[RMDB]
Structure probing data (DMS and 2A3) for a 177-nucleotide construct. 2A3 adducts were read by reverse transcription with SuperScript II with manganese. Reactivities are given for positions 27 through 126. For DMS the reverse transcriptase was MarathonRT. The RNA was probed in 150 mM KOAc, 10 mM MgCl2 and 150 mM bicine (pH 8.5) at 24 C.

RNA sequence: GGGAACGACUCGAGUAGAGUCGAAAAAUCGGCAUAUGCGCGCGCUAGCAUUAGCCGGCAUCGAUUAAUAUAUCGUAUACGCGCGAUGCCGUAGCCGUACGUAGCAUUAUACGCGAUCGAUUAAUCGUGAUGCUCGCAAUUUCGAUUGCGAGCAUCAAAAAGAAACAACAACAACAAC
Reactivity to DMS in 0.01 (KOAc 150mM, MgCl2 10mM, bicine 150mM(pH8.5), 24C), signal-to-noise 1, nucleotides 027 to 126: a070u000c000g000g000c050a040u000a060u000g020c000g060c000g010c140g040c000u000a070g040c040a160u000u000a130g020c020c010g000g000c020a150u000c000g000a020u000u000a140a080u000a090u020a060u000c000g020u020a090u000a210c020g000c000g020c030g000a010u000g010c000c020g000u000a040g010c010c090g000u000a090c070g000u000a020g030c080a130u000u020a080u010a130c050g040c050g040a030u000c060g000a080u000u020a130a030u000c080g000
Reactivity to 2A3 in 0.01 (KOAc 150mM, MgCl2 10mM, bicine 150mM(pH8.5), 24C), signal-to-noise 2, nucleotides 027 to 126: a000u040c000g000g000c030a000u150a060u140g000c000g070c020g030c020g000c020u020a020g000c000a120u300u100a070g020c000c000g040g000c010a020u070c010g020a010u020u100a300a190u230a070u050a000u090c020g050u050a100u020a190c010g000c000g000c010g040a010u010g030c020c000g020u010a010g110c080c010g050u100a060c030g030u080a030g120c050a140u100u120a120u190a160c110g010c000g030a060u100c030g070a030u080u150a120a070u200c060g000